[RMDB]
RNA sequence: GGGAACGACUCGAGUAGAGUCGAAAAGUAAUAGAUAUUUGGAUGACGAGAAAGGGUGCGCUGAUAUCCAGAACGAAUGCUAGCAGUAAAUAGAAUAGCGCUCCUAAUACAACUAGCAACAAAAGGAUAAGGUAUCGUGAUGUCAAUCACAUUGCGAUAUUUAUCAUACGUUCGCGUAUGAUAAAUAAAAAGAAACAACAACAACAAC
Reactivity to 2A3 in 0.01 (KOAc 150mM, MgCl2 10mM, bicine 150mM(pH8.5), 24C), signal-to-noise 7, nucleotides 027 to 156: g030u040a020a130u060a080g070a050u090a130u080u070u060g050g000a040u060g040a040c090g010a030g070a120a070a050g040g010g010u030g000c020g010c010u020g040a040u020a030u120c020c010a020g030a100a010c080g030a110a040u060g000c020u030a020g000c070a020g040u130a040a100a130u120a070g090a060a070u040a050g010c020g000c010u020c000c000u020a060a010u100a040c020a050a030c020u020a000g010c010a000a050c010a040a110a010a010g020g000a030u040a080a080g060g010u030a010u030c000g000u010g010a010u010g010u060c080a060a050u130c010a050c000a010u000u010g000c000g000a000
Reactivity to DMS in 0.01 (KOAc 150mM, MgCl2 10mM, bicine 150mM(pH8.5), 24C), signal-to-noise 5, nucleotides 027 to 156: g020u010a060a120u000a090g020a120u000a060u000u000u000g010g010a100u000g020a180c060g000a090g000a110a120a140g000g020g020u000g010c040g080c040u010g010a140u000a060u010c040c030a120g000a080a150c080g020a080a130u000g020c010u000a020g010c030a120g010u010a050a070a170u010a090g010a070a100u000a070g020c060g030c060u000c030c010u000a040a130u000a070c050a070a050c010u000a020g010c010a040a170c080a040a060a100a120g000g000a070u000a060a120g010g020u000a030u000c010g030u000g000a010u000g010u010c020a130a140u010c180a100c000a010u010u000g020c000g010a020

Chemical mapping of a 207-nucleotide RNA with 2A3 and DMS. The DMS profile rests on 13,283 reads.